Source information: Structure probing data (DMS and 2A3) for a 177-nucleotide construct. The DMS profile rests on 1,588 reads. For DMS the reverse transcriptase was MarathonRT. Conditions: 150 mM KOAc, 10 mM MgCl2 and 150 mM bicine (pH 8.5), 24 C. Values cover nucleotides 27 to 126.
[RMDB]
RNA sequence: GGGAACGACUCGAGUAGAGUCGAAAAGCCAGUUCGGCAUCACCAACUGGCGCGGUAGCUCGAUGCGCCGCGACUUGCUCGCCGGCAACUACCGGCAGGCGUGCGACGACCUGCUGAAGUGGCGCAAAGCCUAGAAGGUCUUCGGACCUUCUAGGCUAAAAGAAACAACAACAACAAC
Reactivity to DMS in 0.01 (KOAc 150mM, MgCl2 10mM, bicine 150mM(pH8.5), 24C), signal-to-noise 2, nucleotides 027 to 126: g030c000c010a040g020u010u010c120g020g010c050a080u010c180a180c050c000a110a140c050u010g000g020c000g030c060g000g040u010a040g010c030u000c120g010a130u000g040c000g020c000c000g000c010g020a030c050u000u010g020c040u000c080g000c030c010g010g000c040a030a050c140u010a100c110c070g000g010c010a000g010g000c010g000u020g000c150g010a070c040g000a120c040c060u000g020c020u000g010a080a040g010u000g010g010c000g000c140a060a090
Reactivity to 2A3 in 0.01 (KOAc 150mM, MgCl2 10mM, bicine 150mM(pH8.5), 24C), signal-to-noise 2, nucleotides 027 to 126: g000c020c010a070g050u000u020c080g020g010c030a080u130c040a050c030c000a000a010c040u040g000g000c000g010c000g050g040u070a120g020c010u040c170g170a110u190g030c020g000c000c000g000c000g010a070c020u020u120g030c030u040c030g050c010c000g000g000c010a070a100c060u140a020c030c000g000g000c010a010g010g000c020g040u130g050c030g040a120c020g090a190c030c020u050g030c020u000g020a050a040g090u000g020g040c020g000c060a110a100